An RNA of 177 nucleotides, treated with DMS and 2A3 and read out base by base. DMS (dimethyl sulfate) methylates the pairing face of unpaired adenines and cytosines. The reactions ran in a buffer of 150 mM KOAc, 10 mM MgCl2 and 150 mM bicine (pH 8.5), at 24 C. It was measured as part of the RMDB library TTRDES. For DMS the reverse transcriptase was MarathonRT. Values cover nucleotides 27 to 126.
RNA sequence: GGGAACGACUCGAGUAGAGUCGAAAAGAUAUGGAUGUAUCGUCGCGAUAAGCUCCCAUCGGAAACGAUGGAGAGCUUUUGACGCGAAUACAUCCUAAGUCAAAUCACUUACCUUCGGGUAAGUGAACUAUUGCUGAACGUUCGCGUUCAGCAAUAGAAAAGAAACAACAACAACAAC
Reactivity to DMS in 0.01 (KOAc 150mM, MgCl2 10mM, bicine 150mM(pH8.5), 24C), signal-to-noise 2, nucleotides 027 to 126: g000a010u000a060u000g000g000a010u010g000u000a000u000c250g030u000c000g000c010g030a170u010a010a020g000c000u010c000c010c000a000u000c010g020g000a010a020a020c020g000a030u000g000g000a150g000a000g020c000u000u000u000u000g010a230c030g030c000g010a130a020u000a000c000a010u000c000c010u000a000a040g000u000c020a100a130a170u000c010a000c000u000u000a010c000c000u000u010c280g020g000g000u000a010a000g020u000g070a010a130
Reactivity to 2A3 in 0.01 (KOAc 150mM, MgCl2 10mM, bicine 150mM(pH8.5), 24C), signal-to-noise 1, nucleotides 027 to 126: g010a010u010a000u030g030g010a000u010g010u020a000u080c300g110u060c000g140c040g150a270u080a300a000g030c000u000c020c000c000a020u010c000g010g000a020a010a000c020g000a000u010g020g000a190g000a000g130c020u000u000u000u000g020a000c000g000c020g030a000a030u000a000c000a010u000c000c000u000a010a010g020u000c030a010a030a290u080c010a000c040u000u010a000c010c030u060u120c300g080g000g000u000a000a000g000u000g000a020a020